[RMDB]
The record gives the reactivity of an RNA of 207 nucleotides to 2A3 and DMS.
RNA sequence: GGGAACGACUCGAGUAGAGUCGAAAACCGUAGGGAUGCUACCCACCCGAUCCCAUGGCGACGAAGUAGGCUUCGAAAGAGGCCUACAGAGCCAUGGAUCGGAGGCAUCCCUAAACGGAAAGUCGUAAACGUAUGCUUCGGCAUACGUUUACGACAAGAAUGAAUAUUGCUUCGGCAAUAUUCAUUCAAAAGAAACAACAACAACAAC
Reactivity to 2A3 in 0.01 (KOAc 150mM, MgCl2 10mM, bicine 150mM(pH8.5), 24C), signal-to-noise 2, nucleotides 027 to 156: c010c000g010u010a000g000g010g000a010u010g000c010u060a150c020c080c050a030c010c010c000g000a000u000c080c070c000a000u000g000g000c040g020a300c050g020a220a000g010u000a000g000g000c000u010u000c000g040a060a040a040g000a010g000g000c000c000u000a000c010a000g000a000g000c000c000a000u000g000g000a000u010c000g000g000a010g010g010c010a000u020c010c000c000u000a030a010a010c010g060g030a180a110a040g000u000c000g000u000a020a000a000c010g000u000a000u000g000c010u020u100c250g020g000c000a000u010a000c000g000u000u000u000a000c000g000a000c000a000a000
Reactivity to DMS in 0.01 (KOAc 150mM, MgCl2 10mM, bicine 150mM(pH8.5), 24C), signal-to-noise 1, nucleotides 027 to 156: c000c020g020u000a030g010g000g020a020u000g020c000u000a030c000c000c090a300c090c010c000g000a020u000c090c020c030a090u010g000g000c000g050a300c150g000a120a130g000u000a010g010g000c020u020u010c020g000a120a160a240g010a050g000g000c010c000u000a010c000a020g010a300g020c020c010a010u050g010g000a000u000c000g000g000a050g030g020c000a010u000c010c000c000u000a000a000a040c020g000g000a060a070a150g000u000c000g010u000a050a000a010c000g030u000a000u000g010c000u000u010c300g010g000c000a020u000a000c010g000u010u010u000a000c000g020a000c010a010a080

Notes: For DMS the reverse transcriptase was MarathonRT.